An RNA of 177 nucleotides, treated with 2A3 and DMS and read out base by base. Reactivities are given for positions 27 through 126.

RNA sequence: GGGAACGACUCGAGUAGAGUCGAAAACGGUGCGUUUCAGCUCAAAAGACGUGAAGAGCUGUUUACACGUCGAUUUUUUUUGAUCGGAGGCGAACUGCAAAGCCGAAGCAGAACGAUCGAGCGCCGAGGGGCCUCGGGGCUUCGGUUCCGAGGUCCCAAAAGAAACAACAACAACAAC
Reactivity to 2A3 in 0.01 (KOAc 150mM, MgCl2 10mM, bicine 150mM(pH8.5), 24C), signal-to-noise 9, nucleotides 027 to 126: c010g000g000u030g010c040g000u010u020u030c010a010g000c000u010c020a110a130a050a050g190a100c130g080u150g110a160a090g020a060g030c050u040g040u020u020u050a050c090a010c060g060u020c010g000a010u020u010u010u000u010u010u060u070g100a150u110c010g010g030a030g020g030c030g070a130a110c130u220g040c160a090a080a030g020c010c010g000a020a000g020c010a010g010a040a010c030g000a010u020c020g010a010g010c010g000c000c000g000a120
Reactivity to DMS in 0.01 (KOAc 150mM, MgCl2 10mM, bicine 150mM(pH8.5), 24C), signal-to-noise 9, nucleotides 027 to 126: c020g000g010u000g020c080g010u000u000u000c000a070g000c030u000c020a080a090a110a110g010a040c070g000u000g010a120a120g000a090g010c120u030g000u020u000u010a170c010a020c040g000u000c000g000a010u000u000u000u010u010u010u010u010g000a060u020c000g010g010a290g000g000c020g020a060a110c130u020g010c150a060a080a130g010c010c010g000a150a130g010c030a030g000a040a050c300g000a030u010c030g010a040g010c010g000c010c000g010a140